[RMDB]
RNA sequence: GGGAACGACUCGAGUAGAGUCGAAAAAGACGGAAACCCAUCGACUGUCACCAGAUGCUGCAUCACCUGAUCACUGAUGGCUCAACGGUAUCCGGCGGUACAACUGAAUACUUGUAGCUGGCUUUUGAAAAGGAGUUCAUCUUCGGAUGAACUCCAACGUUGAUUUUCUGUUCGCAGAAAAUCAACGAAAAGAAACAACAACAACAAC
Reactivity to 2A3 in 0.01 (KOAc 150mM, MgCl2 10mM, bicine 150mM(pH8.5), 24C), signal-to-noise 2, nucleotides 027 to 156: a000g040a010c050g050g000a020a100a050c010c000c010a030u090c040g110a110c070u060g030u030c030a040c030c010a030g020a090u070g040c040u040g030c020a030u010c000a010c010c020u050g010a050u060c000a010c060u030g010a050u060g100g010c040u030c090a060a070c050g040g000u020a030u050c010c000g040g000c030g000g070u100a060c050a060a060c060u110g050a110a080u060a110c050u040u100g050u060a040g060c030u010g030g020c000u110u080u060u180g060a060a040a060a040g010g000a010g000u000u000c000a000u010c000u040u060c160g080g010a000u000g010a000a010c000u000c000c000a000a000